[RMDB]
RNA sequence: GGGAACGACUCGAGUAGAGUCGAAAAAAGGUGUUCGCGGCGCCAGCCCCUCACGUUGACGAGGCGGCUGCUGAGGUCAGGAGGGUGUAUGCCGAGCAACUUGCAAGACGUGUUGCCGAGAAGUAUGGCACCGAUAACCAUUCGUGGUUAUCGGUGCAAAAGAAACAACAACAACAAC
Reactivity to DMS in 0.01 (KOAc 150mM, MgCl2 10mM, bicine 150mM(pH8.5), 24C), signal-to-noise 1, nucleotides 027 to 126: a010a010g010g000u000g020u000u010c130g050c070g010g050c010g010c120c090a050g050c030c000c010c010u000c030a140c140g010u010u010g010a110c090g030a220g010g000c150g000g030c060u000g010c000u000g020a180g010g010u000c040a070g000g000a070g000g030g030u010g010u000a070u000g020c010c040g020a110g020c060a050a040c030u020u010g010c060a010a150g000a060c120g000u000g040u000u000g000c020c020g000a170g000a040a140g010u040a090u000g000